[RMDB]
An RNA of 177 nucleotides, treated with DMS and 2A3 and read out base by base. The RNA was probed in 150 mM KOAc, 10 mM MgCl2 and 150 mM bicine (pH 8.5) at 24 C. It was measured as part of the RMDB library M2PK50. DMS adducts were read by reverse transcription with MarathonRT.
RNA sequence: GGGAACGACUCGAGUAGAGUCGAAAACUUCUGGUGUUCGCACCAGAAGAAAUCCGUACUCGAGGCGCCAGUCGAGACAUAUUGUGGCUGUUCCCAGCCGGAAAACCGCUCCCUUCGGGGAGCGGAAGCAGUAAAACAUGUUCGCAUGUUUUACUGCAAAAGAAACAACAACAACAAC
Reactivity to DMS in 0.01 (KOAc 150mM, MgCl2 10mM, bicine 150mM(pH8.5), 24C), signal-to-noise 2, nucleotides 027 to 126: c000u000u000c000u000g020g010u000g010u010u030c210g010c000a010c000c000a000g000a000a010g000a020a080a110u000c020c010g010u000a020c000u010c010g000a010g010g000c090g030c090c060a050g000u000c090g000a090g000a090c140a070u000a090u010u000g020u000g010g010c010u000g000u000u000c020c010c000a300g010c050c030g000g000a090a050a120a100c010c000g000c000u000c000c000c000u010u000c170g030g000g010g000a020g010c020g000g000a060a020
Reactivity to 2A3 in 0.01 (KOAc 150mM, MgCl2 10mM, bicine 150mM(pH8.5), 24C), signal-to-noise 2, nucleotides 027 to 126: c010u020u010c000u000g000g000u020g020u040u040c230g040c090a000c000c000a000g000a000a000g010a000a000a000u010c000c010g010u020a000c000u000c000g050a030g150g100c030g030c010c010a030g080u090c090g100a070g050a170c070a070u290a070u140u300g080u100g080g010c010u010g000u020u010c010c000c000a000g010c000c010g030g020a050a110a010a020c000c010g000c010u030c000c010c010u020u080c230g070g030g000g000a010g030c000g020g000a010a000